[RMDB]
RNA sequence: GGGAACGACUCGAGUAGAGUCGAAAAGUGGUCAAGUUCGCCGGGAAUGGCGGAAUCAUCGCGGCCGCCGCGGGGGUUGGUGCGGCGGCGGGCACAGCCAGCUGAUUUUGCCGGGUGCUGGCGAUGGCCAUAUCCCACUCUUCGGAGUGGGAUAUGGAAAAGAAACAACAACAACAAC
Reactivity to 2A3 in 0.01 (KOAc 150mM, MgCl2 10mM, bicine 150mM(pH8.5), 24C), signal-to-noise 3, nucleotides 027 to 126: g110u100g000g010u040c040a070a040g050u020u070c000g000c000c000g050g070g110a190a150u200g030g010c030g020g000a020a010u050c010a010u070c040g030c100g180g000c020c000g010c030c000g000c000g010g040g010g000g020u120u110g080g000u090g010c010g000g000c020g010g000c000g020g020g000c060a100c020a060g050c020c000a000g010c030u030g080a150u030u070u100u130g020c020c020g010g000g090u120g070c000u020g040g010c020g000a020u060g060g010
Reactivity to DMS in 0.01 (KOAc 150mM, MgCl2 10mM, bicine 150mM(pH8.5), 24C), signal-to-noise 1, nucleotides 027 to 126: g000u020g030g000u000c100a060a070g020u020u000c000g010c000c010g000g010g000a160a080u040g000g000c000g040g010a010a010u000c010a000u010c080g000c070g020g000c000c000g000c000c010g000c000g000g020g000g000g060u010u000g000g000u000g020c020g000g000c040g000g000c010g020g000g000c000a040c090a090g020c000c040a270g000c050u000g000a070u010u000u010u000g000c020c000g000g000g000u020g000c030u000g010g020c000g020a020u010g000g000